[RMDB]
RNA sequence: GGGAACGACUCGAGUAGAGUCGAAAAAAAGGGAGGCGAAGAUAGAAGGGGAGACCCCGAUCAGAAUGCCGAUCGGGUGCAAGCACCUCUGGAGUCAUCCGGCCCCAAAGGAGGAGAGUCCCGCCAGUGACCCGGUGCUUCGGCACCGGGAAAAGAAACAACAACAACAAC
Reactivity to 2A3 in 0.01 (KOAc 150mM, MgCl2 10mM, bicine 150mM(pH8.5), 24C), signal-to-noise 2, nucleotides 027 to 129: a000a000a000g060g000g000a050g000g020c010g010a010a000g020a030u200a060g040a080a020g000g000g000g000a000g020a000c000c000c050c000g000a000u000c000a010g230a300a100u260g080c030c050g010a000u000c000g000g000g060u050g010c050a000a090g000c020a040c030c000u040c020u000g000g030a070g000u040c000a030u060c010c020g030g040c000c000c030c000a120a240a000g060g020a000g010g050a060g000a060g000u030c000c000c000g000c030c050a000g060u130g090a070
Reactivity to DMS in 0.01 (KOAc 150mM, MgCl2 10mM, bicine 150mM(pH8.5), 24C), signal-to-noise 3, nucleotides 027 to 129: a190a160a070g030g030g000a060g000g060c060g040a000a010g010a130u060a020g070a060a020g000g030g000g000a080g030a150c080c000c040c020g060a010u070c020a090g030a120a040u060g010c090c050g000a020u040c020g090g000g020u030g010c050a050a210g030c120a120c020c010u000c050u000g000g000a090g020u050c100a140u030c050c060g030g050c070c010c000c080a070a070a090g000g000a110g030g000a090g000a130g010u000c040c000c040g030c000c230a070g020u030g040a170